[RMDB]
RNA sequence: GGGAACGACUCGAGUAGAGUCGAAAACUGGCGUCGUUCGCGACGCCAGAAAUACUAAGACCGAAGCUUAGAUGGCGGACACUUCCCUUGGGCGCAAAACAAAAACCGGUCUGUUCGCAGACCGGAACUGUAAUCAGAUGUUCGCAUCUGAUUACAGAAAAGAAACAACAACAACAAC
Reactivity to 2A3 in 0.01 (KOAc 150mM, MgCl2 10mM, bicine 150mM(pH8.5), 24C), signal-to-noise 2, nucleotides 027 to 126: c000u010g000g000c000g010u010c010g000u040u050c110g040c010g120a000c000g010c000c000a000g000a000a010a010u060a010c030u040a060a030g050a050c010c050g110a100a000g010c020u070u060a030g010a080u070g060g000c000g000g030a010c030a000c020u020u020c000c000c000u010u030g070g010g000c030g000c020a100a110a040a060c040a060a080a030a050a020c000c010g000g000u000c000u010g020u020u050c290g010c080a000g000a000c000c050g000g000a000a010
Reactivity to DMS in 0.01 (KOAc 150mM, MgCl2 10mM, bicine 150mM(pH8.5), 24C), signal-to-noise 3, nucleotides 027 to 126: c010u000g010g020c000g010u000c020g030u000u010c220g030c000g030a030c010g030c010c000a000g000a030a060a070u010a110c110u000a040a060g000a080c050c070g010a070a120g010c020u000u010a030g000a150u010g020g030c020g000g000a070c050a040c050u000u000c000c010c010u000u010g020g000g000c090g010c080a080a040a060a050c130a050a080a070a080a110c000c000g000g000u000c000u000g010u000u000c150g030c000a010g000a000c000c000g010g000a010a010
Chemical mapping of a 177-nucleotide RNA with 2A3 and DMS. The DMS profile rests on 3,028 reads. The RNA was probed in 150 mM KOAc, 10 mM MgCl2 and 150 mM bicine (pH 8.5) at 24 C. The 2A3 profile rests on 4,404 reads. For 2A3 the reverse transcriptase was SuperScript II with manganese. High DMS reactivity at an A or C suggests that its Watson-Crick edge is free. Source: RMDB library M2PK50, as collected in RNAgym.